[RMDB]
RNA sequence: GGGAACGACUCGAGUAGAGUCGAAAAAAAGCAGUCCCCGCAGCUCUCAGUGUUCGACCCUCCAGUGAGUGUCCACGCACAGGGUGCUGGUGGGUCUACUAGACUGCACCUGCCCGUCUGCUGGAUGAGUGACUGCAGCCAGCUUACAUCUGCAAAAAGUAUUUAAAAUCUUCGGAUUUUAAAUACUAAAAGAAACAACAACAACAAC
Reactivity to DMS in 0.01 (KOAc 150mM, MgCl2 10mM, bicine 150mM(pH8.5), 24C), signal-to-noise 1, nucleotides 027 to 156: a070a060a090g030c030a020g020u000c000c030c000c000g010c020a090g010c030u000c020u010c100a070g000u000g030u000u010c100g040a080c020c000c020u000c010c070a090g010u000g010a200g000u000g010u000c030c060a120c090g060c020a060c030a110g040g010g010u010g010c040u000g000g030u020g010g020g020u000c030u010a040c050u000a120g010a080c010u010g000c030a050c040c020u000g000c030c010c010g010u000c040u000g000c040u010g010g010a060u010g020a110g020u000g010a090c070u030g030c030a040g030c030c010a100g020c040u020u000a120c060a140u000c060u010g040c050a050a150a190a170
Reactivity to 2A3 in 0.01 (KOAc 150mM, MgCl2 10mM, bicine 150mM(pH8.5), 24C), signal-to-noise 1, nucleotides 027 to 156: a000a000a000g000c010a010g000u030c000c000c000c020g000c030a010g000c030u000c000u010c030a030g000u030g020u110u130c050g000a010c000c000c030u020c020c030a070g030u080g110a070g010u020g040u030c070c040a090c130g000c000a020c010a050g040g010g040u130g010c020u030g000g040u080g040g000g000u010c010u010a060c000u000a030g000a010c000u010g020c000a020c020c050u060g000c010c030c000g060u040c020u060g020c000u040g050g000a060u070g020a090g090u120g050a080c030u070g000c000a000g030c010c000a000g010c000u020u000a030c000a060u050c030u090g120c050a150a060a050a030

This 207-nucleotide RNA was probed chemically with DMS and 2A3. The reactions ran in a buffer of 150 mM KOAc, 10 mM MgCl2 and 150 mM bicine (pH 8.5), at 24 C. Reactivities are given for positions 27 through 156. Reactivities are rounded to 0.1 and cut off at 0 and 3. For DMS, 2,251 sequencing reads were counted. The data come from the RNA Mapping Database (RMDB), library OK3TST. 2A3 adducts were read by reverse transcription with SuperScript II with manganese.